[RMDB]
RNA sequence: GGGAACGACUCGAGUAGAGUCGAAAAGGUCGCCGACUCCGACGAGUUCGUCGUCGCCGUGCGCCAGUUGGCUAUCGGCCAGGACGCUCCGAUAGAGGUGGUCCGCGAGGGUCGGCAUGUGACGCUGCGCUGAGAUGGACUUCGGUCCAUCUCAGCGAAAAGAAACAACAACAACAAC
Reactivity to DMS in 0.01 (KOAc 150mM, MgCl2 10mM, bicine 150mM(pH8.5), 24C), signal-to-noise 2, nucleotides 027 to 126: g000g010u000c040g000c010c000g000a010c000u000c010c030g010a050c090g000a090g000u020u000c170g000u000c010g010u010c100g030c020c010g020u000g020c190g010c010c000a300g000u000u000g030g020c010u000a150u000c010g030g000c000c070a220g000g010a020c020g000c040u000c010c010g000a130u010a170g010a140g000g010u000g000g010u000c020c010g010c130g030a160g000g000g000u000c030g020g000c020a050u000g010u000g010a010c030g010c040u010g000
Reactivity to 2A3 in 0.01 (KOAc 150mM, MgCl2 10mM, bicine 150mM(pH8.5), 24C), signal-to-noise 1, nucleotides 027 to 126: g060g030u050c000g060c010c020g000a000c000u000c030c020g020a000c020g020a030g100u250u300c090g060u010c000g060u040c010g110c020c010g040u010g000c020g010c010c040a140g300u250u300g140g000c010u000a000u070c020g030g000c030c010a020g000g000a000c020g070c270u000c020c030g200a100u230a110g140a070g020g080u050g030g020u010c030c000g010c010g060a180g010g000g000u030c000g020g030c020a030u140g040u010g010a020c010g000c090u100g030